[RMDB]
RNA sequence: GGGAACGACUCGAGUAGAGUCGAAAAUUUCUUUAACAGUCUGUAACCCUGGAAACGAAUUAUUCGGAGAUAGGGUUUAAUGAUUGGUAGAGCGUCACACCUCUGUGGCGUCUAGUGUGUCCUUGACAGCUGAAAAAGUUUUCGAACUUUUUCAGCUAAAAGAAACAACAACAACAAC
Reactivity to 2A3 in 0.01 (KOAc 150mM, MgCl2 10mM, bicine 150mM(pH8.5), 24C), signal-to-noise 1, nucleotides 027 to 126: u010u000u010c040u130u080u070a180a070c000a000g010u000c000u070g040u140a000a000c000c000c000u020g050g010a000a120a000c040g060a000a000u280u140a170u300u270c000g020g080a040g000a000u120a020g000g000g000u010u000u000a000a060u000g000a000u000u010g000g000u050a100g000a020g090c010g020u000c010a000c000a070c020c080u060c080u160g000u000g060g000c000g000u040c030u020a030g060u100g040u000g020u000c000c080u010u140g030a080c040
Reactivity to DMS in 0.01 (KOAc 150mM, MgCl2 10mM, bicine 150mM(pH8.5), 24C), signal-to-noise 3, nucleotides 027 to 126: u030u010u010c020u010u020u020a080a120c000a010g000u000c010u000g000u010a020a000c000c010c010u010g010g000a270a080a020c010g000a050a240u040u040a170u040u010c010g000g000a020g000a300u030a000g030g020g020u000u000u000a060a040u010g010a000u000u000g000g010u010a010g000a040g000c040g020u000c000a030c010a050c160c110u020c190u020g040u000g000g000c000g000u010c040u010a070g000u000g000u010g000u010c080c030u000u010g020a130c290